[RMDB]
RNA sequence: GGGAACGACUCGAGUAGAGUCGAAAAAGUUUUGGCCGGCCAAGCAUCACAACUGAAUGCAGUGGUUGACUUGCAGGACAGAAACACUGAACUGUCAUAUCAGCUUUUGCUUGAUUCUCUGGGAGACAGAAGCAGAUACUUCAGCAUGUGGAAUCAGCAGUAGUGUCUAUUUCGAUAGACACUACUGAAAAGAAACAACAACAACAAC
Reactivity to DMS in 0.01 (KOAc 150mM, MgCl2 10mM, bicine 150mM(pH8.5), 24C), signal-to-noise 3, nucleotides 027 to 156: a100g020u000u000u000u000g010g020c000c040g000g040c060c020a040a130g020c010a060u000c050a060c030a060a130c070u000g010a080a070u010g000c000a100g020u000g010g050u000u000g000a050c020u000u000g010c060a090g000g000a210c020a070g000a090a070a080c090a110c030u000g010a060a100c020u010g020u010c050a110u000a080u000c020a060g010c010u000u000u020u000g020c010u000u000g010a150u000u000c040u000c090u010g030g000g020a130g010a040c020a050g000a030a040g020c030a090g010a090u000a030c030u000u000c010a050g010c000a080u010g010u000g010g000a050a300u000c040a100g000
Reactivity to 2A3 in 0.01 (KOAc 150mM, MgCl2 10mM, bicine 150mM(pH8.5), 24C), signal-to-noise 6, nucleotides 027 to 156: a010g020u040u030u030u070g050g020c020c010g010g010c050c020a030a010g000c020a030u060c040a010c050a170a150c060u120g060a180a090u230g030c030a040g040u020g030g020u060u050g050a130c010u010u050g010c020a020g000g020a010c000a020g090a060a090a000c060a020c050u040g040a110a030c010u030g050u100c050a030u020a030u130c020a010g000c000u060u070u100u090g040c010u060u090g050a090u220u040c070u010c050u100g100g030g010a030g020a030c010a000g020a010a010g020c000a010g010a050u050a070c020u040u060c040a040g030c030a060u120g040u050g070g030a050a060u070c030a030g010
An RNA of 207 nucleotides, treated with DMS and 2A3 and read out base by base.
The 2A3 profile rests on 4,094 reads.
The RNA was probed in 150 mM KOAc, 10 mM MgCl2 and 150 mM bicine (pH 8.5) at 24 C.
It was measured as part of the RMDB library OK3TST.
Values are in units of 0.01, from 0 to 300, in steps of 10.